[RMDB]
The record gives the reactivity of an RNA of 177 nucleotides to DMS and 2A3.
DMS adducts were read by reverse transcription with MarathonRT.
The DMS profile rests on 3,928 reads.
RNA sequence: GGGAACGACUCGAGUAGAGUCGAAAAUUCAUGGAGACCCAUCCCACACUGGAUGCCAUACACUGUGACAUCGGCAAUGCCACUGAGUUUUACAAAAUAUUCCAAGAUGAGAUUAGGGAGGUGUCGCGCACCAGUAUACGUUCGCGUAUACUGGUGCAAAAGAAACAACAACAACAAC
Reactivity to DMS in 0.01 (KOAc 150mM, MgCl2 10mM, bicine 150mM(pH8.5), 24C), signal-to-noise 3, nucleotides 027 to 126: u020u050c080a070u020g010g000a060g000a120c030c030c040a180u000c030c000c050a190c170a090c110u000g010g000a040u000g010c050c070a060u000a090c160a120c120u010g010u000g000a050c070a020u000c060g010g020c020a030a040u020g000c000c000a030c040u000g000a020g000u000u000u000u000a070c210a090a070a070a060u060a050u000u020c020c050a060a020g000a090u010g010a060g000a060u000u010a110g010g010g010a110g000g010u000g000u000c010g000c140
Reactivity to 2A3 in 0.01 (KOAc 150mM, MgCl2 10mM, bicine 150mM(pH8.5), 24C), signal-to-noise 5, nucleotides 027 to 126: u060u020c020a020u080g000g040a070g020a040c000c000c030a040u020c020c000c000a070c030a040c040u080g040g010a030u050g020c020c010a070u090a130c050a020c110u070g020u060g070a010c000a040u040c000g030g010c030a030a070u110g020c030c010a030c070u040g010a020g060u040u030u030u050a100c070a010a130a060a050u190a120u040u050c020c010a030a030g090a170u150g030a050g020a120u090u100a110g010g000g060a030g000g000u050g000u020c000g000c010